[RMDB]
RNA sequence: GGGAACGACUCGAGUAGAGUCGAAAACAGCUUCUCCUUGGCGCGAGCCACGAUACUAUCCAAUCCUGUUCCAAAUUAAAGAAGCGAGCAUGAUGUCGGCGAAACCGUCCGCACCUUUCGGGCAUCGGGCUCUGGAGAUCGAGAGGGGCGGGAACGGCCAAAGUCAAGAGUUCGCUCUUGACUUUGGAAAAGAAACAACAACAACAAC
Reactivity to 2A3 in 0.01 (KOAc 150mM, MgCl2 10mM, bicine 150mM(pH8.5), 24C), signal-to-noise 2, nucleotides 027 to 156: c060a030g030c050u040u000c030u030c030c020u040u060g010g000c010g020c060g030a040g010c010c040a050c010g010a020u100a160c030u090a080u100c000c050a060a000u010c000c010u040g030u070u000c050c040a060a100a170u140u180a170a150a050g040a100a010g050c020g030a040g000c010a020u120g010a020u040g090u100c050g060g040c070g080a100a000a060c020c010g040u030c010c000g010c000a020c000c000u000u020u020c000g030g010g050c090a080u090c010g060g000g030c040u050c020u150g000g040a060g000a050u110c010g000a000g010a010g020g000g020g000c010g010g000g020a000a030c000g010g000

An RNA of 207 nucleotides, treated with 2A3 and read out base by base. It was measured as part of the RMDB library OK3TST. Conditions: 150 mM KOAc, 10 mM MgCl2 and 150 mM bicine (pH 8.5), 24 C. For 2A3, 936 sequencing reads were counted.